[RMDB]
RNA sequence: GGGAACGACUCGAGUAGAGUCGAAAAUAGAAUGGCCCCUUGCUGCCUGUUGCCUGUAACUGAUAGUUAGAUCUAUAGCCUUGAUUAGAUUCAAUUUUUUCUUUUUGAUCAAGAAUCCUUCACAGGUGAUGUGGUACUUCCUAGUGCAUUAUAUCAAGGUAAUGAUCAUAUUCGUAUGAUCAUUACCAAAAGAAACAACAACAACAAC
Reactivity to 2A3 in 0.01 (KOAc 150mM, MgCl2 10mM, bicine 150mM(pH8.5), 24C), signal-to-noise 6, nucleotides 027 to 156: u140a030g130a090a080u100g060g000c000c000c000c020u030u050g040c060u040g000c030c000u020g020u040u030g000c010c020u030g020u050a080a110c070u050g070a050u060a080g050u120u050a080g020a160u030c020u050a060u070a140g030c010c000u030u030g020a030u030u020a050g030a110u070u070c060a120a150u100u130u050u030u110u090c080u070u150u040u050u110g020a020u020c010a000a000g000a030a080u030c000c050u080u100c050a020c000a030g000g030u010g020a020u050g060u090g010g000u020a050c040u060u050c010c010u040a030g040u030g060c030a020u100u170a090u200a070u300c060a090a020
Reactivity to DMS in 0.01 (KOAc 150mM, MgCl2 10mM, bicine 150mM(pH8.5), 24C), signal-to-noise 3, nucleotides 027 to 156: u010a120g020a150a090u000g010g020c030c010c010c060u000u010g000c040u010g020c030c010u000g030u000u000g000c000c000u000g010u000a050a120c100u000g010a080u010a060g000u000u010a140g010a120u000c030u000a080u000a150g010c140c010u000u000g010a040u010u000a020g000a040u010u000c020a040a010u000u000u000u010u000u000c020u020u000u000u000u000g010a030u000c010a010a050g010a110a100u000c070c050u010u010c060a090c030a040g020g040u010g000a050u000g010u020g020g020u000a050c060u000u000c040c030u000a060g000u010g000c020a080u010u000a090u010a130u010c070a090a230
Annotation
Structure probing data (2A3 and DMS) for a 207-nucleotide construct. Reactivities are rounded to 0.1 and cut off at 0 and 3. DMS adducts were read by reverse transcription with MarathonRT. For 2A3 the reverse transcriptase was SuperScript II with manganese. It was measured as part of the RMDB library OK3TST.